[RMDB]
RNA sequence: GGGAACGACUCGAGUAGAGUCGAAAAUAAAUGAGCAAUGGUGUUAAUGAUAUCGAACAGGAAAGACCACGCACCUCGCAUACACCGACGAUGGUGUCUGUGAAAUCCCCCUUGAGCGUUGCGAGGGUAAGCGCAUGACUUUCGAGUCAUGCGCUUAAAAAGAAACAACAACAACAAC
Reactivity to 2A3 in 0.01 (KOAc 150mM, MgCl2 10mM, bicine 150mM(pH8.5), 24C), signal-to-noise 2, nucleotides 027 to 126: u110a000a050a100u090g020a050g080c080a000a190u180g000g080u000g060u110u130a010a040u130g050a030u150a100u240c080g010a050a040c000a000g010g000a000a230a000g010a140c000c030a040c040g010c010a140c030c020u090c040g030c070a070u020a030c050a000c010c000g220a170c240g000a140u040g000g030u070g010u000c030u050g060u080g000a000a040a000u110c010c000c010c010c000u050u070g000a020g030c170g020u140u230g000c000g080a040g000g000g000
Reactivity to DMS in 0.01 (KOAc 150mM, MgCl2 10mM, bicine 150mM(pH8.5), 24C), signal-to-noise 1, nucleotides 027 to 126: u000a030a090a060u010g000a040g040c070a030a040u010g000g000u000g000u000u010a040a040u030g000a070u000a100u060c060g020a110a080c080a090g080g060a070a120a050g000a140c020c010a040c120g000c040a090c040c000u000c030g000c000a010u000a030c000a020c050c050g020a040c290g020a130u000g020g010u000g000u000c000u030g000u100g000a010a050a040u000c050c000c010c000c130u000u000g000a040g000c150g040u000u010g000c000g000a000g000g000g030